[RMDB]
The record gives the reactivity of an RNA of 177 nucleotides to DMS.
RNA sequence: GGGAACGACUCGAGUAGAGUCGAAAACGGGCGCGAUGGGCGGCUGCGAGGGCUACCGCCCACUCAUGCAGCAGCUGCAGCUGCUCUGCACCGCCUGCGUAGCCGCAGUCAGCGAGGCGCACACUGCAAACCCCCGAUCAUUCGUGAUCGGGGGUUUAAAAGAAACAACAACAACAAC
Reactivity to DMS in 0.01 (KOAc 150mM, MgCl2 10mM, bicine 150mM(pH8.5), 24C), signal-to-noise 1, nucleotides 027 to 126: c060g000g010g050c010g000c000g000a140u000g000g020g020c010g010g000c040u000g000c040g000a080g020g000g010c030u000a030c300c260g000c010c000c030a010c100u050c060a060u010g020c120a030g030c090a050g010c010u010g030c120a130g010c010u000g000c010u020c050u010g020c040a100c190c060g000c010c020u020g000c030g010u000a090g000c080c040g040c090a090g010u000c110a040g000c090g000a110g060g020c060g000c030a110c110a090c110u000g000c050
The reactions ran in a buffer of 150 mM KOAc, 10 mM MgCl2 and 150 mM bicine (pH 8.5), at 24 C. For DMS the reverse transcriptase was MarathonRT.